[RMDB]
RNA sequence: GGGAACGACUCGAGUAGAGUCGAAAAGAGACGUUCGCGUCUCAUAAACGCGUACUACUAGCGACAUGACGGGAGGGCUAAUCGCUCCCAAAUAGGAGCGACAACCCGAAGAACGUCAUGAAUCGCUAGUAUCGCCAUCAGCUCCUUUCGAGGAGAAUCAGGGAACUAAAUUCGUUUAGUUCCCUGAAAAAGAAACAACAACAACAAC
Reactivity to DMS in 0.01 (KOAc 150mM, MgCl2 10mM, bicine 150mM(pH8.5), 24C), signal-to-noise 2, nucleotides 027 to 156: g000a070g000a030c000g020u000u020c170g030c020g030u000c000u020c220a050u000a030a030a050c030g050c020g040u000a120c140u000a030c000u000a010g000c000g010a070c010a030u000g010a020c000g010g000g050a200g000g040g000c010u010a140a080u000c020g000c000u000c000c000c010a030a090a110u000a040g000g010a000g010c010g040a030c030a060a060c000c000c000g020a070a230g000a100a180c020g020u000c000a010u000g000a030a100u010c020g040c010u010a000g020u000a010u010c050g020c030c040a130u010c080a100g020c000u000c000c010u010u000u000c200g020a030g000g010a030g020a060a100
Reactivity to 2A3 in 0.01 (KOAc 150mM, MgCl2 10mM, bicine 150mM(pH8.5), 24C), signal-to-noise 4, nucleotides 027 to 156: g010a000g000a000c020g010u050u070c200g070c010g090u010c000u010c020a040u220a000a090a010c080g010c010g010u070a090c040u000a010c000u000a020g000c000g000a000c000a000u000g000a000c000g010g000g000a040g000g000g010c020u050a110a090u030c000g020c000u010c010c010c010a020a030a010u210a020g010g000a000g000c000g020a010c030a040a020c000c030c000g010a030a040g010a010a020c000g010u000c010a000u000g000a020a060u000c000g000c000u000a000g000u000a000u010c010g010c000c000a170u160c060a050g080c010u010c000c000u050u120u210c300g110a040g000g010a010g010a020a030

An RNA of 207 nucleotides, treated with DMS and 2A3 and read out base by base. The DMS profile rests on 6,398 reads. Conditions: 150 mM KOAc, 10 mM MgCl2 and 150 mM bicine (pH 8.5), 24 C. The data come from the RNA Mapping Database (RMDB), library RNAMAK.